[RMDB]
RNA sequence: GGGAACGACUCGAGUAGAGUCGAAAAGCCUCAUAUACAUGAACGACUGAUGUAGAGUUCGAUUGGGGAGAUAAGUAUCUAAUGCGUGUCAUUAGGUCACCUCGGUAUGACUAGGGUGAGAGCUAGGGCUUCUCUCCCACUUCGGUGGGAGAGAAGCAAAAGAAACAACAACAACAAC
Reactivity to 2A3 in 0.01 (KOAc 150mM, MgCl2 10mM, bicine 150mM(pH8.5), 24C), signal-to-noise 2, nucleotides 027 to 126: g040c010c000u000c080a000u070a010u000a040c000a020u090g060a100a000c030g100a020c200u060g060a030u220g150u120a000g040a000g100u000u000c020g020a060u050u050g000g000g000g120a000g030a100u060a010a100g070u180a030u020c030u030a000a000u060g000c100g210u120g040u150c050a030u000u060a000g000g000u070c010a050c000c000u010c000g000g000u070a050u090g020a000c000u000a050g030g000g000u000g010a040g000a000g010c000u010a010g110g000
Reactivity to DMS in 0.01 (KOAc 150mM, MgCl2 10mM, bicine 150mM(pH8.5), 24C), signal-to-noise 2, nucleotides 027 to 126: g050c020c010u020c080a050u030a080u020a040c110a110u050g030a110a120c140g010a040c080u000g010a170u020g020u000a040g000a300g000u000u000c000g000a020u030u020g000g000g090g020a000g020a100u020a030a080g060u040a030u010c000u000a000a030u000g040c030g020u020g030u080c000a000u000u000a010g010g010u090c000a220c020c000u000c000g020g000u020a070u080g030a070c020u000a100g000g000g000u030g000a060g010a200g000c080u000a110g070g030